[RMDB]
RNA sequence: GGGAACGACUCGAGUAGAGUCGAAAAGUUCGGAUUGAGGGCUGGAACUCGCCCUCAUGAAGAUGGAAUCCGUAGUAAUCGCAUUUCAAAACAGUGCGGUGAAUACGUCCCUGCUCCUUGCACACACCCGAAGUAAAUUAUUCGUAAUUUACUUCGGAAAAGAAACAACAACAACAAC
Reactivity to 2A3 in 0.01 (KOAc 150mM, MgCl2 10mM, bicine 150mM(pH8.5), 24C), signal-to-noise 9, nucleotides 027 to 126: g100u050u030c000g000g000a010u000u000g000a000g010g020g000c040u100g080g120a130a090c060u060c130g000c000c000c000u000c000a000u000g000a000a000g010a000u020g030g040a060a050u040c040c010g000u010a010g010u030a010a010u010c000g000c010a020u020u080u110c220a150a120a070a070c070a050g010u000g000c000g000g010u010g010a030a030u030a010c010g040u040c000c000c000u010g020c010u040c020c020u050u140g020c060a030c000a010c010a030c070
Reactivity to DMS in 0.01 (KOAc 150mM, MgCl2 10mM, bicine 150mM(pH8.5), 24C), signal-to-noise 9, nucleotides 027 to 126: g020u010u000c000g000g000a130u010u000g010a020g000g020g030c010u000g020g020a150a120c220u020c170g010c000c000c000u000c000a000u000g000a300a150g000a020u000g000g010a170a090u010c110c000g010u000a010g000u010a170a010u000c010g010c010a010u000u000u020c110a090a090a120a150c300a020g010u000g000c000g000g000u000g010a140a230u010a010c020g000u000c010c010c010u000g010c050u000c060c050u010u000g010c050a050c100a100c190a090c180